[RMDB]
RNA sequence: GGGAACGACUCGAGUAGAGUCGAAAAGAUAUGGACAUCCUGUGAAGGGUAGUUCCUGUAUCGGAAACGAUACUGGAACUAUAAUCUGGAGGAUGUCCUAAGUCAAACCGGAAGUUCGCUUCCGGAAUCUAAAUAAUGUCUUCGGACAUUAUUUAGAAAAAGAAACAACAACAACAAC
Reactivity to 2A3 in 0.01 (KOAc 150mM, MgCl2 10mM, bicine 150mM(pH8.5), 24C), signal-to-noise 6, nucleotides 027 to 126: g010a020u060a030u130g000g000a010c000a000u010c000c010u300g130u080g300a100a030g060g020g020u020a010g000u010u010c010c000u000g000u000a000u000c010g020g000a070a060a020c010g000a000u000a000c000u010g000g000a010a000c000u000a010u000a010a060u050c010u020g100g130a010g000g000a000u010g000u000c000c000u000a020a010g030u010c020a040a050a070c000c000g000g010a000a010g010u110u270c300g050c200u010u000c000c010g000g000a010a040
Reactivity to DMS in 0.01 (KOAc 150mM, MgCl2 10mM, bicine 150mM(pH8.5), 24C), signal-to-noise 6, nucleotides 027 to 126: g000a040u000a300u000g010g000a010c000a010u000c000c000u000g010u010g000a160a090g010g010g010u000a010g000u000u000c000c000u000g000u000a010u000c000g010g000a130a120a150c000g010a010u000a000c000u000g000g010a010a010c000u000a010u000a100a090u010c010u000g010g000a010g010g010a010u000g010u000c000c000u000a010a050g010u000c030a100a140a190c000c000g000g000a020a010g010u000u010c260g010c010u000u000c000c000g010g000a040a030

This 177-nucleotide RNA was probed chemically with 2A3 and DMS. For 2A3, 15,846 sequencing reads were counted. 2A3 adducts were read by reverse transcription with SuperScript II with manganese. Values cover nucleotides 27 to 126. Conditions: 150 mM KOAc, 10 mM MgCl2 and 150 mM bicine (pH 8.5), 24 C.